[RMDB]
RNA sequence: GGGAACGACUCGAGUAGAGUCGAAAAAAUCCUAAAGGAAUUCCUAUUGUUGAUGACCCUGUGGUUGAUUGGCAUUAUUUUGAUGCACAGCCCUUGACCAGGAAGGUACAACAGCUUUUCUAUACAGUAACAACGUUCUUCGGAACGUUGAAAAGAAACAACAACAACAAC
Reactivity to DMS in 0.01 (KOAc 150mM, MgCl2 10mM, bicine 150mM(pH8.5), 24C), signal-to-noise 4, nucleotides 027 to 129: a000a030u020c020c000u000a060a100a090g000g000a050a020u020u010c000c000u020a060u040u010g020u000u000g000a070u040g040a100c100c040c040u030g040u050g000g000u000u010g010a000u000u000g020g080c040a040u000u000a140u050u050u030u100g010a000u020g000c000a120c060a090g000c040c000c050u040u000g020a080c130c080a050g000g000a130a040g040g020u030a040c110a000a060c180a080g000c010u000u000u000u000c050u000a110u000a110c090a000g040u000a080a090
Reactivity to 2A3 in 0.01 (KOAc 150mM, MgCl2 10mM, bicine 150mM(pH8.5), 24C), signal-to-noise 5, nucleotides 027 to 129: a010a050u050c050c010u090a140a050a080g020g010a000a000u010u010c000c000u020a090u030u070g010u030u020g100a210u050g040a000c020c010c040u070g070u100g050g040u030u030g090a150u020u130g060g000c030a030u040u060a160u020u270u060u160g040a060u050g040c050a040c030a150g010c040c000c000u050u060g030a020c010c000a030g010g060a080a060g060g000u030a040c020a000a000c010a030g010c050u090u050u050u010c020u060a180u040a140c070a040g080u060a210a000
An RNA of 170 nucleotides, treated with DMS and 2A3 and read out base by base. Source: RMDB library 15KLIB, as collected in RNAgym. The reactions ran in a buffer of 150 mM KOAc, 10 mM MgCl2 and 150 mM bicine (pH 8.5), at 24 C.